[RMDB]
RNA sequence: GGGAACGACUCGAGUAGAGUCGAAAAUAUGAACAUACGGAUAUUCACCUUUAUAUGAAGAAACAGGUUCUUUAAAUAAAAUUCUCGAAUCAUUCGGAAUAGGAGGGUCAGCUGGAUCAGAAGACUUUGCUACAGUAGCAGCCAUUGCCGACAAAGAUAGCCAAUAUAUAUUCGUAUAUAUUGGCUAAAAAGAAACAACAACAACAAC
Reactivity to 2A3 in 0.01 (KOAc 150mM, MgCl2 10mM, bicine 150mM(pH8.5), 24C), signal-to-noise 2, nucleotides 027 to 156: u150a040u020g070a060a030c020a030u130a040c040g010g020a010u030a070u130u080c020a050c010c000u040u080u050a250u060a020u120g070a050a070g010a050a090a020c040a040g000g030u030u000c000u040u090u080a070a110a050u060a020a050a010a030u110u010c120u050c080g020a020a020u080c010a050u130u040c010g000g000a020a010u020a070g030g020a000g010g050g010u020c000a000g000c040u030g000g030a020u040c010a040g030a110a010g020a040c000u090u060u030g030c000u050a010c010a030g050u050a010g000c010a000g000c030c020a040u060u110g020c020c010g170a020c100a080a080a100g210a050
Reactivity to DMS in 0.01 (KOAc 150mM, MgCl2 10mM, bicine 150mM(pH8.5), 24C), signal-to-noise 2, nucleotides 027 to 156: u000a100u010g020a070a120c020a120u010a140c020g000g010a100u000a030u000u010c010a080c090c040u000u000u030a090u000a110u030g010a080a120g000a110a120a160c060a090g000g030u000u000c010u010u000u020a030a060a110u000a080a040a090a130u000u000c040u010c050g000a060a080u010c040a110u000u000c020g020g010a170a090u000a080g000g000a050g030g000g030u000c030a060g020c020u010g020g000a040u000c010a080g020a020a080g020a080c010u000u000u000g010c010u000a060c040a070g010u010a070g030c020a060g020c020c030a130u000u000g000c010c000g000a090c040a040a070a070g010a260